The record gives the reactivity of an RNA of 207 nucleotides to DMS and 2A3. For 2A3 the reverse transcriptase was SuperScript II with manganese. The DMS profile rests on 4,280 reads. The reactions ran in a buffer of 150 mM KOAc, 10 mM MgCl2 and 150 mM bicine (pH 8.5), at 24 C. The data come from the RNA Mapping Database (RMDB), library M2RFPK. DMS adducts were read by reverse transcription with MarathonRT.

[RMDB]
RNA sequence: GGGAACGACUCGAGUAGAGUCGAAAAAAACAAGGGGAGGUUUCGGCCAAAUGUUGUAUGCAGAAAGCGUGAGGAAGGUAGCACUUAGACACUCACGAGUAGCGGUUCGGCAGUAGUGCUAAAAUGAGACAGUACGAAAAGUUCGCUUUUCGUACAAGGCUAUACAUAUCUUCGGAUAUGUAUAGCCAAAAGAAACAACAACAACAAC
Reactivity to DMS in 0.01 (KOAc 150mM, MgCl2 10mM, bicine 150mM(pH8.5), 24C), signal-to-noise 2, nucleotides 027 to 156: a040a010a070c050a040a060g010g000g030g010a060g010g000u000u000u000c090g030g000c040c040a030a110a120u010g020u000u000g000u000a120u020g030c020a120g000a050a080a100g020c040g000u000g020a050g010g000a110a070g010g020u000a080g050c020a070c060u020u010a140g000a140c060a070c010u010c000a060c020g010a160g000u000a060g010c060g000g020u000u000c030g010g000c010a070g000u000a040g020u000g010c010u010a020a030a040a060u010g010a190g000a100c010a150g000u040a020c010g000a010a020a040a030g010u000u000c300g020c000u000u000u000u010c010g030u000a010c000a020a120
Reactivity to 2A3 in 0.01 (KOAc 150mM, MgCl2 10mM, bicine 150mM(pH8.5), 24C), signal-to-noise 4, nucleotides 027 to 156: a000a000a000c060a050a040g030g000g000g000a030g000g030u030u070u070c050g050g000c020c020a030a060a060u110g000u060u020g010u030a110u090g050c020a000g100a130a050a000g050c030g030u020g010a010g030g050a060a010g040g020u070a010g020c020a000c040u030u040a040g020a080c040a020c050u010c000a030c040g040a050g030u030a020g040c060g030g040u050u040c020g040g000c020a040g040u100a000g010u020g040c010u050a000a020a040a070u120g010a040g020a030c070a060g000u000a000c000g000a000a000a000a000g020u040u050c130g050c100u000u000u000u000c000g000u010a000c000a000a010